[RMDB]
Chemical mapping of a 177-nucleotide RNA with 2A3 and DMS. For 2A3, 3,436 sequencing reads were counted. The reactions ran in a buffer of 150 mM KOAc, 10 mM MgCl2 and 150 mM bicine (pH 8.5), at 24 C. For DMS, 1,988 sequencing reads were counted. 2A3 adducts were read by reverse transcription with SuperScript II with manganese.
RNA sequence: GGGAACGACUCGAGUAGAGUCGAAAAGAUAUGGAUCUAUACUUCUUUUGACGGCUAUCGGAAACGAUCAGCCGAUAAGAAGUAGAUCCUAAGUCAAAACAUAACCUGUGUUCGCACAGGUUAUGAACAUAUGCUGUGCGUUCGCGCACAGCAUAUGAAAAGAAACAACAACAACAAC
Reactivity to 2A3 in 0.01 (KOAc 150mM, MgCl2 10mM, bicine 150mM(pH8.5), 24C), signal-to-noise 2, nucleotides 027 to 126: g010a000u040a040u090g000g000a000u000c010u030a190u060a300c010u030u020c040u060u220u160u180g220a090c010g000g020c010u000a000u000c000g000g040a030a060a010c000g000a000u070c180a030g010c020c010g000a000u060a000a030g000a000a000g000u010a000g000a000u000c000c000u000a110a000g020u000c040a010a150a050a080c010a000u010a000a000c020c010u010g000u020g030u070u120c300g000c070a000c000a000g000g000u010u010a010u000g000a000a000
Reactivity to DMS in 0.01 (KOAc 150mM, MgCl2 10mM, bicine 150mM(pH8.5), 24C), signal-to-noise 2, nucleotides 027 to 126: g010a020u000a240u020g000g000a000u020c000u000a070u010a120c090u000u000c000u000u010u010u000g020a210c040g010g010c000u010a020u000c000g010g010a080a060a140c000g000a040u000c180a020g000c010c000g000a030u010a000a000g000a010a010g010u000a010g000a010u000c000c000u020a020a090g000u000c020a090a080a130a230c010a000u000a000a010c000c000u000g020u000g000u000u030c250g000c010a000c000a010g000g010u000u000a000u000g000a060a210